[RMDB]
RNA sequence: GGGAACGACUCGAGUAGAGUCGAAAAGACGAGGAUUAUAUAUAUUGCAUGGCUUUCGGACAACCAUGACGGUAACUCCAUACCUUUGGUAUGUUGUCAUGGCUGCAUGACGUACAUCGCAGGGGUAACACCAGGAGGACUUCGGUCCUCCUGGUGUAAAAGAAACAACAACAACAAC
Reactivity to DMS in 0.01 (KOAc 150mM, MgCl2 10mM, bicine 150mM(pH8.5), 24C), signal-to-noise 2, nucleotides 027 to 126: g000a110c080g030a150g050g000a000u030u030a090u030a090u060a070u040a020u000u000g000c080a010u000g000g010c000u040u010u000c030g020g000a170c130a090a230c000c000a010u000g020a140c020g040g000u000a030a040c230u040c150c030a090u000a090c000c000u020u060u070g020g000u000a000u000g040u050u040g030u030c000a010u020g040g000c060u000g020c000a060u030g000a050c070g070u000a110c070a000u020c040g000c070a010g020g020g000g010u020a110
Reactivity to 2A3 in 0.01 (KOAc 150mM, MgCl2 10mM, bicine 150mM(pH8.5), 24C), signal-to-noise 2, nucleotides 027 to 126: g030a000c010g030a040g110g030a030u200u000a010u070a020u040a000u000a020u100u090g050c040a020u070g030g010c000u070u030u090c130g070g000a020c000a030a030c000c000a020u000g010a010c000g070g000u160a080a080c000u000c020c010a050u070a090c000c000u070u010u040g040g010u020a020u030g070u050u030g000u000c010a020u020g010g020c050u080g030c050a030u060g020a020c040g050u030a020c000a010u000c010g050c130a030g000g020g000g030u010a010